[RMDB]
RNA sequence: GGGAACGACUCGAGUAGAGUCGAAAAUUAUUUGGGUUUUGCAGCUUAUUUCUUACAUUCAUAGAAUAGUUGACCUAUCUGCUUGUAGUCCAGGCUUGUUGCAAAUAUUUCCACAGUCCCCCAAGCCUCUGACUGAAUAGUUCGCUAUUCAGUCAGAAAAAGAAACAACAACAACAAC
Reactivity to DMS in 0.01 (KOAc 150mM, MgCl2 10mM, bicine 150mM(pH8.5), 24C), signal-to-noise 1, nucleotides 027 to 126: u010u000a050u000u000u000g020g000g020u000u000u000u000g020c010a060g030c060u000u000a070u000u000u000c030u010u010a080c100a070u000u010c080a110u010a090g010a040a040u000a040g020u010u020g010a080c150c020u000a020u000c010u020g000c040u000u000g020u000a050g000u000c110c110a070g020g030c050u000u010g020u000u010g000c040a030a040a070u000a090u010u000u000c000c020a080c130a120g020u000c030c020c000c070c070a050a160g010c090c020